[RMDB]
RNA sequence: GGGAACGACUCGAGUAGAGUCGAAAAGAAAGAAAGUACUGAAAGUAUUGUGGGAAAUAAUGUGUAAAUCAUUGACCGUUCGUGCGCUGGUAAGAAUAAAAUUUUAGUCCAGACACCACCAGUAUAACCAAUCUAGUGACCUUCGGGUCACUAGAAAGAAUACCUAGUUCUUCGGAACUAGGUAUUCAAAAGAAACAACAACAACAAC
Reactivity to 2A3 in 0.01 (KOAc 150mM, MgCl2 10mM, bicine 150mM(pH8.5), 24C), signal-to-noise 3, nucleotides 027 to 156: g050a010a100a010g080a070a120a010g010u030a000c030u030g050a100a170a020g100u160a200u270u160g000u030g000g020g010a010a010a020u020a010a020u000g010u000g020u010a010a040a030u020c010a020u010u010g000a010c000c020g020u110u140c120g050u200g210c010g000c000u000g010g000u040a050a020g030a060a020u200a170a130a070a080u050u080u050u020a000g000u000c000c000a000g030a030c020a020c060c000a010c000c000a010g030u010a030u040a100a020c020c040a010a050u010c010u010a000g000u000g000a010c000c000u000u050c220g080g000g000u000c000a000c010u010a000g010a000a000a000
Reactivity to DMS in 0.01 (KOAc 150mM, MgCl2 10mM, bicine 150mM(pH8.5), 24C), signal-to-noise 1, nucleotides 027 to 156: g000a080a120a100g010a120a080a020g010u030a010c020u000g000a100a080a130g020u000a050u000u030g020u000g010g000g000a170a130a060u000a020a030u000g020u000g010u000a050a070a300u010c030a020u000u000g000a150c020c010g040u000u000c050g000u000g040c030g010c020u000g020g080u000a050a060g000a090a070u010a050a060a000a300u000u000u000u030a140g020u000c000c000a050g000a280c200a080c010c030a040c020c020a070g000u000a020u000a030a050c000c000a030a240u010c000u010a000g000u020g000a010c000c000u000u000c300g000g000g040u000c020a020c000u010a000g000a000a010a080

Conditions: 150 mM KOAc, 10 mM MgCl2 and 150 mM bicine (pH 8.5), 24 C. The record gives the reactivity of an RNA of 207 nucleotides to 2A3 and DMS. High 2A3 reactivity points to a flexible backbone, as in loops and unpaired stretches. 2A3 adducts were read by reverse transcription with SuperScript II with manganese.